[RMDB]
RNA sequence: GGGAACGACUCGAGUAGAGUCGAAAAUAGGCGAAUGCCUGUGGAUCUACAUUUGUUGCGGGUUCGAGACCCGUCAGAGCCCGGCUCUGUAGCUCAAUGGUAGAGCGGUGUAUUCACAUAAACUUGUAAAAGACACGUGCCUUCGGGCACGUGUCAACAUCUUGUAUCCGUUCGCGGAUACAAGAUGAAAAGAAACAACAACAACAAC
Reactivity to DMS in 0.01 (KOAc 150mM, MgCl2 10mM, bicine 150mM(pH8.5), 24C), signal-to-noise 1, nucleotides 027 to 156: u010a050g010g020c010g000a110a020u000g030c010c040u020g020u000g000g010a090u000c120u000a040c060a070u000u000u030g010u000u020g020c000g080g040g080u000u000c040g000a300g020a100c000c000c000g010u000c120a090g020a050g010c000c100c100g010g060c020u000c020u000g100u000a100g030c020u000c050a090a030u020g010g020u020a050g020a100g130c000g000g060u010g000u000a070u000u000c050a040c000a110u010a070a040a100c050u000u000g000u000a040a030a100a170g000a040c000a010c010g050u020g000c000c000u000u000c300g030g020g030c000a010c000g020u000g000u000c010a020a030
Reactivity to 2A3 in 0.01 (KOAc 150mM, MgCl2 10mM, bicine 150mM(pH8.5), 24C), signal-to-noise 1, nucleotides 027 to 156: u210a010g000g000c030g090a290a060u300g010c000c000u000g000u030g000g000a030u000c060u130a020c010a020u020u010u240g050u040u010g020c000g000g020g060u000u000c000g000a010g000a040c000c000c000g000u000c000a000g000a000g020c030c300c200g050g010c000u020c020u040g030u010a000g000c000u000c010a000a040u150g260g080u160a030g000a000g020c020g000g000u000g000u010a010u020u010c000a000c000a020u140a060a110a050c070u060u110g050u180a020a050a050a030g020a000c020a000c010g000u000g010c000c000u010u110c180g010g010g020c000a000c000g000u000g000u000c000a000a000